[RMDB]
RNA sequence: GGGAACGACUCGAGUAGAGUCGAAAAGAUAUGGAACGCAUGGUUUCGGACGAGGAUCUAGGAUCGGAAACGAUCCUAGGGAGUCCACAUGUCGUUCCUAAGUCAAAGGGAUAGUUCGCUAUCCCAAGGACCUUUUCUUGUUCGCAAGAAAAGGUCCAAAAGAAACAACAACAACAAC
Reactivity to 2A3 in 0.01 (KOAc 150mM, MgCl2 10mM, bicine 150mM(pH8.5), 24C), signal-to-noise 1, nucleotides 027 to 126: g000a000u020a060u050g000g000a040a010c010g000c010a000u000g100g240u280u300u300c300g000g000a000c030g040a300g010g000a000u000c020u010a020g010g000a020u020c020g000g000a020a000a000c020g000a000u000c040c020u010a000g020g000g000a010g040u000c030c010a090c000a030u020g000u000c010g000u020u020c000c010u000a000a010g000u000c010a100a150a090g040g010g000a010u010a020g040u010u060c270g010c190u000a000u010c000c000c000a000a060
The data come from the RNA Mapping Database (RMDB), library TTRDES. This 177-nucleotide RNA was probed chemically with 2A3. The reactions ran in a buffer of 150 mM KOAc, 10 mM MgCl2 and 150 mM bicine (pH 8.5), at 24 C. The 2A3 profile rests on 1,306 reads.